The record gives the reactivity of an RNA of 177 nucleotides to 2A3 and DMS. Values cover nucleotides 27 to 126. 2A3 adducts were read by reverse transcription with SuperScript II with manganese. The RNA was probed in 150 mM KOAc, 10 mM MgCl2 and 150 mM bicine (pH 8.5) at 24 C. It was measured as part of the RMDB library OK2TST.
[RMDB]
RNA sequence: GGGAACGACUCGAGUAGAGUCGAAAAUGGACCGGCUGGACAUCCGGCGCGGGGUGUAUGGUGAUGAUUGCAGUGGUCACUUCGCUGGCGAUGCGAACACCGAAUCCACGGAGGAUGGCGCUCGAUAAAUCCUCCGAGUAUUCGUACUCGGAGGAUUAAAAGAAACAACAACAACAAC
Reactivity to 2A3 in 0.01 (KOAc 150mM, MgCl2 10mM, bicine 150mM(pH8.5), 24C), signal-to-noise 1, nucleotides 027 to 126: u050g000g000a030c010c020g000g020c000u030g050g020a040c000a050u010c000c000g070g090c070g030c060g010g000g030g030u050g010u020a130u140g050g000u020g020a170u070g010a040u110u140g000c030a020g100u090g140g000u030c020a030c000u110u140c120g030c060u030g110g060c060g020a040u050g050c020g000a030a010c030a000c020c020g000a030a030u010c010c010a020c040g000g020a020g020g000a030u010g000g000c040g000c020u060c040g000a010u070a080
Reactivity to DMS in 0.01 (KOAc 150mM, MgCl2 10mM, bicine 150mM(pH8.5), 24C), signal-to-noise 4, nucleotides 027 to 126: u010g010g010a120c040c020g000g010c060u000g010g020a150c110a100u000c030c040g000g020c060g030c060g000g000g020g010u000g010u010a070u010g010g020u010g010a100u010g000a110u000u000g010c060a060g030u000g010g000u000c060a050c070u000u010c100g000c100u000g020g000c060g000a100u000g000c030g010a050a080c050a030c020c000g010a110a120u000c020c040a080c070g000g010a160g010g000a050u010g010g010c060g000c070u000c060g010a110u000a060